This 207-nucleotide RNA was probed chemically with 2A3. It was measured as part of the RMDB library M2RFPK. 2A3 adducts were read by reverse transcription with SuperScript II with manganese.
[RMDB]
RNA sequence: GGGAACGACUCGAGUAGAGUCGAAAACAGGAAACUGGUUAAUCCUUUUCCUUGGUAGUAUAGCGGAAACCAUAAAUAAGAAGAACUCUAAGUGCUUGAGUAGAGUUAAAAUAAUUAGACAGGCAAUUAAGGUACUCCACGUUCGCGUGGAGUACAAGAUGGUCAUGUUGUUCGCAACAUGACCAUCAAAAGAAACAACAACAACAAC
Reactivity to 2A3 in 0.01 (KOAc 150mM, MgCl2 10mM, bicine 150mM(pH8.5), 24C), signal-to-noise 2, nucleotides 027 to 156: c010a000g000g020a020a030a060c140u070g070g000u090u100a160a150u250c000c000u010u000u020u000c020c000u000u040g070g000u030a050g010u020a040u100a120g070c040g030g020a050a050a050c020c000a030u090a080a070a060u140a110a040g100a040a010g030a050a010c000u000c000u000a000a010g000u020g190c010u020u000g000a000g000u000a000g010a010g010u170u200a000a010a000a000u050a000a020u230u010a010g000a010c000a000g000g000c000a000a010u160u180a150a050g070g000u000a000c000u000c000c000a000c010g000u030u050c140g020c010g120u000g010g000a000g000u000a010c000a000a000
The reactions ran in a buffer of 150 mM KOAc, 10 mM MgCl2 and 150 mM bicine (pH 8.5), at 24 C.